[RMDB]
RNA sequence: GGGAACGACUCGAGUAGAGUCGAAAAACGUAAAGCUAAAGAUUAUGGUUUUACUGUUUUUGUGUGCACAGACAACUCUGCUAACACUAAAGUUCUUAGGAACAAGGGUGUUGAUUAUACUAAGAAGAAACGGCGUUCUUCGGAACGCCGAAAAGAAACAACAACAACAAC
Reactivity to DMS in 0.01 (KOAc 150mM, MgCl2 10mM, bicine 150mM(pH8.5), 24C), signal-to-noise 3, nucleotides 027 to 129: a010c030g010u000a040a000a000g000c000u040a000a160a200g030a300u110u030a110u050g030g010u010u010u010u010a020c010u050g000u050u030u000u000u000g010u000g000u010g070c090a000c010a030g010a160c000a060a210c110u060c060u030g000c150u030a060a000c030a020c000u000a000a000a000g040u000u030c030u000u070a220g000g000a000a050c030a020a180g000g000g000u000g030u030u000g040a160u000u000a050u050a060c150u030a030a030g020a120a040g000a020a030a020
Reactivity to 2A3 in 0.01 (KOAc 150mM, MgCl2 10mM, bicine 150mM(pH8.5), 24C), signal-to-noise 2, nucleotides 027 to 129: a000c000g000u000a000a000a000g020c000u020a000a150a000g190a300u300u170a190u240g010g000u010u000u010u010a000c010u110g020u000u000u000u140u030g160u030g040u010g000c080a010c000a090g050a170c030a080a010c020u000c060u090g010c000u120a000a040c000a020c010u010a050a050a150g030u030u020c010u000u160a010g000g000a060a000c010a000a150g100g000g000u070g000u080u030g000a040u070u190a110u020a100c000u060a000a000g040a020a000g000a010a060a010
Annotation
The data come from the RNA Mapping Database (RMDB), library 15KLIB. This 170-nucleotide RNA was probed chemically with DMS and 2A3. DMS (dimethyl sulfate) methylates the pairing face of unpaired adenines and cytosines. Conditions: 150 mM KOAc, 10 mM MgCl2 and 150 mM bicine (pH 8.5), 24 C.